[RMDB]
RNA sequence: GGGAACGACUCGAGUAGAGUCGAAAAGAUAUGGACUGUGCAAGGCCAGUAGUCGGAAACGACUACGGCUGAUGACCACACAUGUCCUAAGUCAAAACCAAAGCGUUGCUUCGGCAACGCUUUGGAAUCUACUCUAUCCGUUCGCGGAUAGAGUAGAAAAAGAAACAACAACAACAAC
Reactivity to 2A3 in 0.01 (KOAc 150mM, MgCl2 10mM, bicine 150mM(pH8.5), 24C), signal-to-noise 1, nucleotides 027 to 126: g040a000u060a010u060g000g000a010c010u020g050u040g000c040a090a140g050g020c030c180a080g000u010a000g010u000c000g000g000a050a040a010c020g000a000c000u000a000c010g010g060c030u020g010a070u270g030a040c040c040a050c000a010c010a050u300g020u000c000c030u020a050a020g040u010c020a020a020a090a210c000c030a000a000a000g010c030g000u000u010g020c000u040u140c280g090g000c010a000a000c000g000c010u000u010u000g000g000a010a000
Reactivity to DMS in 0.01 (KOAc 150mM, MgCl2 10mM, bicine 150mM(pH8.5), 24C), signal-to-noise 3, nucleotides 027 to 126: g010a040u010a250u010g010g000a000c020u000g000u000g000c090a150a270g000g000c000c010a140g020u010a010g000u000c020g000g000a060a080a110c010g020a010c000u000a000c000g000g000c020u000g010a020u010g000a100c250c220a140c030a000c050a010u010g020u010c000c000u010a060a100g010u010c040a110a070a100a180c000c000a000a020a000g020c010g010u000u000g010c000u000u030c240g010g020c000a000a000c000g020c010u010u000u000g000g000a040a030

The record gives the reactivity of an RNA of 177 nucleotides to 2A3 and DMS. The RNA was probed in 150 mM KOAc, 10 mM MgCl2 and 150 mM bicine (pH 8.5) at 24 C. The DMS profile rests on 2,082 reads. DMS adducts were read by reverse transcription with MarathonRT.